Chemical mapping of a 207-nucleotide RNA with 2A3 and DMS.
RNA sequence: GGGAACGACUCGAGUAGAGUCGAAAAGCGUACUACAGGCUGGCAAGGAGGUCCAUCUCUAGCGUGGAGCCUCCCAAAUAGGAGGCUCUCGGGUGGACUACCCACCCUUGCCAAGGCCUGUAUCGCAAAGGAGUGUAAACUUCGGUUUACACUCCAACACUAUUGACAGGUUCGCCUGUCAAUAGUGAAAAGAAACAACAACAACAAC
Reactivity to 2A3 in 0.01 (KOAc 150mM, MgCl2 10mM, bicine 150mM(pH8.5), 24C), signal-to-noise 3, nucleotides 027 to 156: g010c000g040u090a070c050u010a000c030a010g000g000c000u030g000g000c000a000a000g010g000a000g000g030u000c010c000a000u020c100u030c060u190a110g110c100g180u300g040g000a000g000c000c000u080c000c000c000a180a300a080u300a080g000g010a000g020g070c010u000c000u000c000g000g000g000u000g000g000a000c000u020a030c010c030c000a070c000c000c000u000u000g030c000c000a000a000g020g000c000c000u000g000u000a000u040c000g000c000a080a070a020g000g000a000g010u000g030u010a000a010a000c010u070u110c290g010g000u000u000u000a000c000a000c000u000c000c000a000a000
Reactivity to DMS in 0.01 (KOAc 150mM, MgCl2 10mM, bicine 150mM(pH8.5), 24C), signal-to-noise 2, nucleotides 027 to 156: g040c030g000u000a060c070u000a000c010a040g050g050c000u000g000g000c030a040a020g000g000a230g020g000u000c000c030a000u000c020u010c070u000a150g010c180g030u010g030g000a010g060c010c000u000c000c030c010a030a090a300u000a040g000g000a060g010g040c000u000c000u000c010g140g010g060u000g000g000a070c010u000a010c030c010c060a300c090c000c010u000u000g030c000c010a050a040g020g020c000c030u000g000u010a010u000c030g020c020a010a140a170g000g010a010g030u010g000u000a010a010a010c030u000u020c300g080g000u000u000u000a000c000a000c000u000c000c000a000a060
Conditions: 150 mM KOAc, 10 mM MgCl2 and 150 mM bicine (pH 8.5), 24 C. The data come from the RNA Mapping Database (RMDB), library RNAMAK. For DMS the reverse transcriptase was MarathonRT.